[RMDB]
RNA sequence: GGGAACGACUCGAGUAGAGUCGAAAAAGUGAUCCUCUCUUUUUGGUCUACCAAAGUGCUGGGAUUACAGCACUUUGGCAUGAGCCACUAUGCCUGACCAAUGAAAUUUGAGGUGGGAAACGGAGCACCCAGGCUGAAGUGCAAUGCUGUGGUCAUAGCAUUUAGUAUGGUUCGCCAUACUAAAUGCAAAAGAAACAACAACAACAAC
Reactivity to DMS in 0.01 (KOAc 150mM, MgCl2 10mM, bicine 150mM(pH8.5), 24C), signal-to-noise 2, nucleotides 027 to 156: a080g000u010g000a150u000c020c020u000c040u000c010u000u000u000u000u000g020g000u000c010u000a020c020c000a020a010a020g010u000g010c010u020g010g010g020a240u010u010a110c000a010g020c000a030c000u000u010u000g010g000c040a010u000g000a120g010c010c030a060c120u000a070u000g000c050c020u000g030a110c010c010a130a120u000g010a060a030a140u010u000u000g020a070g000g040u000g010g020g000a080a080a130c060g000g010a170g040c050a110c040c030c040a070g030g020c010u000g000a090a060g020u000g020c020a150a140u000g030c020u000g020u000g010g030u000c030a100u000a250
Reactivity to 2A3 in 0.01 (KOAc 150mM, MgCl2 10mM, bicine 150mM(pH8.5), 24C), signal-to-noise 4, nucleotides 027 to 156: a000g090u060g020a080u050c010c010u010c010u000c010u010u070u040u070u050g010g030u000c010u020a040c020c010a010a000a010g010u000g000c000u020g020g080g160a300u160u220a140c000a000g000c010a000c000u000u000u000g000g000c010a010u100g030a030g010c010c010a080c050u050a040u140g000c020c020u040g020a050c020c000a050a070u130g100a100a070a130u150u140u090g020a010g030g000u050g010g020g000a070a100a040c040g020g020a010g040c020a020c000c010c000a000g050g000c020u030g030a090a010g050u040g030c040a010a060u040g000c020u020g030u060g020g020u050c020a060u070a050